[RMDB]
RNA sequence: GGGAACGACUCGAGUAGAGUCGAAAAUUGUGUUCUGGACUGGAUAAGGCCUGCUGGGAUAGCCAUAUCUUAACUCAGAUCGGGACUGACAACACCCUCUCUCUUUAGCAUGAUAUCUUUGCUGGUCCAGGAUAUUAUUCUUCGGAAUAAUAUCCUGAAAAGAAACAACAACAACAAC
Reactivity to DMS in 0.01 (KOAc 150mM, MgCl2 10mM, bicine 150mM(pH8.5), 24C), signal-to-noise 7, nucleotides 027 to 126: u010u010g010u000g010u010u000c020u000g020g010a110c040u000g010g010a080u010a080a090g010g010c070c040u000g020c050u000g000g000g000a100u000a080g010c070c070a050u010a040u000c020u000u000a070a120c100u000c060a040g010a080u000c090g010g000g000a080c040u000g010a050c070a040a070c100a130c030c020c010u000c060u000c040u000c030u000u000u000a060g010c070a040u010g010a090u000a050u010c070u000u010u000g000c030u000g010g010u000c080
Reactivity to 2A3 in 0.01 (KOAc 150mM, MgCl2 10mM, bicine 150mM(pH8.5), 24C), signal-to-noise 6, nucleotides 027 to 126: u070u050g050u010g020u070u030c020u040g030g040a040c030u030g000g020a050u040a080a040g040g000c010c020u030g020c040u050g010g020g080a100u070a040g020c020c010a040u040a020u080c030u050u080a060a070c020u010c080a010g020a110u050c020g020g000g050a030c010u070g020a020c020a060a020c010a090c020c000c000u000c010u000c000u000c000u040u100u080a020g000c000a030u040g040a070u120a100u140c040u060u050u080g030c020u030g010g040u040c020